[RMDB]
RNA sequence: GGGAACGACUCGAGUAGAGUCGAAAAGAUAUGGACUCUAAGCUCGAUAAGUCUUAUCGGAAACGAUGGACUUUUGACGAGCGAAGAGUCCUAAGUCAAAACUUUGUCGGGUUCGCCCGACAAAGAAGGCUAUAUUAGCCUUCGGGCUAAUAUAGCCAAAAGAAACAACAACAACAAC
Reactivity to DMS in 0.01 (KOAc 150mM, MgCl2 10mM, bicine 150mM(pH8.5), 24C), signal-to-noise 1, nucleotides 027 to 126: g050a020u020a210u000g000g000a010c000u000c010u000a050a300g010c000u000c000g040a120u010a020a020g010u010c000u000u010a050u000c000g000g000a060a030a150c000g000a020u010g010g000a020c000u020u000u000u010g010a130c060g000a030g020c020g000a130a040g000a030g020u000c000c000u000a000a050g010u000c010a120a110a070a190c020u000u020u010g000u010c000g000g030g020u000u000c210g020c020c010c000g010a010c000a000a000a000g000a100a060

An RNA of 177 nucleotides, treated with DMS and read out base by base. Values cover nucleotides 27 to 126. For DMS, 930 sequencing reads were counted.